[RMDB]
Chemical mapping of a 177-nucleotide RNA with DMS and 2A3. High 2A3 reactivity points to a flexible backbone, as in loops and unpaired stretches. 2A3 adducts were read by reverse transcription with SuperScript II with manganese. The RNA was probed in 150 mM KOAc, 10 mM MgCl2 and 150 mM bicine (pH 8.5) at 24 C. It was measured as part of the RMDB libraries RFM100 and RFMREP.
RNA sequence: GGGAACGACUCGAGUAGAGUCGAAAAGGUGAAACGGUGGUGUAAGAGACCACCAGCGCCUCGGGUGACCGGGGCGGCUCGGUAAACCCCACCCGGAGCAAGGCCAAGAGGAAGCCCUCGGGCUUCUCACGUGACCAAAAUUCGUUUUGGUCACGUGAAAAGAAACAACAACAACAAC
Reactivity to DMS in 0.01 (KOAc 150mM, MgCl2 10mM, bicine 150mM(pH8.5), 24C), signal-to-noise 2, nucleotides 027 to 126: g000g030u010g000a100a070a050c110g000g000u000g000g010u010g000u020a170a120g010a280g010a060c010c040a010c010c010a020g000c000g000c000c020u000c030g010g000g000u030g000a210c000c000g010g000g000g010c020g000g000c030u000c140g000g010u000a070a160a120c020c000c010c010a080c070c010c000g000g010a080g000c080a110a080g000g000c030c020a080a160g010a100g010g000a010a000g000c020c010c040u040c300g000g000g000c020u000u000c000u010
Reactivity to 2A3 in 0.01 (KOAc 150mM, MgCl2 10mM, bicine 150mM(pH8.5), 24C), signal-to-noise 2, nucleotides 027 to 126: g080g000u090g030a100a040a050c030g000g000u010g000g000u030g010u030a030a020g020a000g010a030c000c000a000c000c000a000g010c000g000c000c000u000c010g020g010g010u090g060a090c020c000g010g000g000g000c010g000g010c000u010c040g030g020u100a120a090a060c010c010c000c000a020c000c000c000g030g020a070g030c070a100a060g040g000c010c020a100a040g050a030g090g020a030a020g020c000c000c000u060c100g030g000g000c000u010u000c010u000